Record summary:
Chemical mapping of a 177-nucleotide RNA with DMS and 2A3. Conditions: 150 mM KOAc, 10 mM MgCl2 and 150 mM bicine (pH 8.5), 24 C.

RNA sequence: GGGAACGACUCGAGUAGAGUCGAAAACAUUUGACAUGAUCGACACCUUGGCUGAUGUAAAGCCGUCGCAGAUGGACGUUGAGUGGCGCACGCCGUGAAACCAACCCCCGCCUCGUCUGAUCGGAGAGAGGUUACUAUACUUCGGUAUAGUAACCUCAAAAGAAACAACAACAACAAC
Reactivity to DMS in 0.01 (KOAc 150mM, MgCl2 10mM, bicine 150mM(pH8.5), 24C), signal-to-noise 2, nucleotides 027 to 126: c060a040u020u000u000g030a130c130a070u000g000a060u010c050g000a070c080a090c130c020u000u000g010g000c000u000g000a110u010g020u000a050a120a100g010c030c000g000u010c080g000c010a030g010a120u000g010g000a050c050g020u000u010g020a190g000u000g000g010c040g000c150a040c120g010c050c020g030u000g000a080a090a050c040c060a030a240c020c020c010c040c030g000c000c000u000c050g000u010c010u000g020a060u010c040g000g010a150g010a090
Reactivity to 2A3 in 0.01 (KOAc 150mM, MgCl2 10mM, bicine 150mM(pH8.5), 24C), signal-to-noise 1, nucleotides 027 to 126: c020a050u080u120u170g100a080c070a060u080g020a050u130c020g010a010c000a020c100c050u050u060g050g000c030u030g010a100u080g110u250a000a130a030g000c000c000g000u030c030g000c020a060g030a080u080g030g010a000c000g010u040u040g040a070g080u050g010g000c030g030c030a030c090g030c010c000g080u090g030a090a040a000c000c020a070a090c000c010c000c010c010g060c040c010u050c020g020u020c030u080g000a030u080c030g020g000a050g020a000

For DMS, 1,541 sequencing reads were counted.